[RMDB]
RNA sequence: GGGAACGACUCGAGUAGAGUCGAAAAGAUCAGAAUAGAAAACGAUGCGUUAAGUGUCCAGCAGACGGGGAGUUGCUGCCGGAACGAAAAGCAAAGCUUGCGGUAUCGUUUUCGCAUCCCGCUGAAAGUAAGCGGCGCGUCUUCGGACGCGCCGCAACCCUAAUAUGAAGUUCGCUUCAUAUUAGGGAAAAGAAACAACAACAACAAC
Reactivity to 2A3 in 0.01 (KOAc 150mM, MgCl2 10mM, bicine 150mM(pH8.5), 24C), signal-to-noise 1, nucleotides 027 to 156: g100a100u080c020a010g070a130a060u100a090g000a040a030a000a010c000g000a010u010g020c000g000u050u130a040a000g000u010g000u000c010c000a000g000c020a000g040a080c050g090g050g050g000a050g040u300u220g050c000u000g040c000c000g000g000a000a020c040g020a010a090a030a000g040c120a100a120a040g010c000u020u000g000c000g000g000u020a000u000c000g000u000u000u000u000c000g000c000a060u020c000c000c010g000c020u010g080a090a100a110g100u180a110a090g050c010g050g080c000g000c020g040u000c010u010u000c010g040g000a000c000g000c000g000c020c000g000c000a000a010
About this RNA:
Source: RMDB library M2RFPK, as collected in RNAgym. This 207-nucleotide RNA was probed chemically with 2A3. 2A3 adducts were read by reverse transcription with SuperScript II with manganese. The RNA was probed in 150 mM KOAc, 10 mM MgCl2 and 150 mM bicine (pH 8.5) at 24 C.